RNA sequence: GGGAACGACUCGAGUAGAGUCGAAAAGCAUUUAUUAUGCAUGUUUCUUGGUACAUUAUGUUCGGGCCUAUCGUUCCCAUAUGGAUGACCUGCGUCUAUACAGUUGCAAUGUGCUUUAGACACUUCUCACCUUGCGGGUUCGCCCGCAAGAAAAGAAACAACAACAACAAC
Reactivity to 2A3 in 0.01 (KOAc 150mM, MgCl2 10mM, bicine 150mM(pH8.5), 24C), signal-to-noise 2, nucleotides 027 to 129: g020c000a000u020u080u020a300u120u240a000u040g050c050a090u090g020u000u070u010c040u020u030g000g000u080a040c000a090u070u080a070u100g110u050u050c080g030g000g030c000c000u030a030u050c000g010u000u000c020c000c000a000u060a040u040g020g000a010u000g040a040c020c030u010g030c090g010u000c080u030a080u000a040c030a010g030u100u000g100c010a000a060u100g020u010g030c000u080u070u100a030g070a040c010a000c080u000u000c000u000c000a050c000
Reactivity to DMS in 0.01 (KOAc 150mM, MgCl2 10mM, bicine 150mM(pH8.5), 24C), signal-to-noise 3, nucleotides 027 to 129: g010c020a000u030u020u020a190u010u020a020u060g020c110a200u030g010u040u000u030c030u000u050g090g000u020a070c060a080u040u060a100u090g000u000u010c130g010g040g050c100c110u010a140u030c020g040u000u070c010c010c010a000u020a000u070g040g070a100u000g000a080c000c000u030g020c120g040u040c150u060a020u070a140c050a090g050u040u030g000c070a040a130u000g060u040g000c040u020u010u050a130g010a040c060a000c020u020u050c030u010c030a130c170
An RNA of 170 nucleotides, treated with 2A3 and DMS and read out base by base. For DMS, 5,977 sequencing reads were counted. The RNA was probed in 150 mM KOAc, 10 mM MgCl2 and 150 mM bicine (pH 8.5) at 24 C. It was measured as part of the RMDB library 15KLIB. DMS adducts were read by reverse transcription with MarathonRT.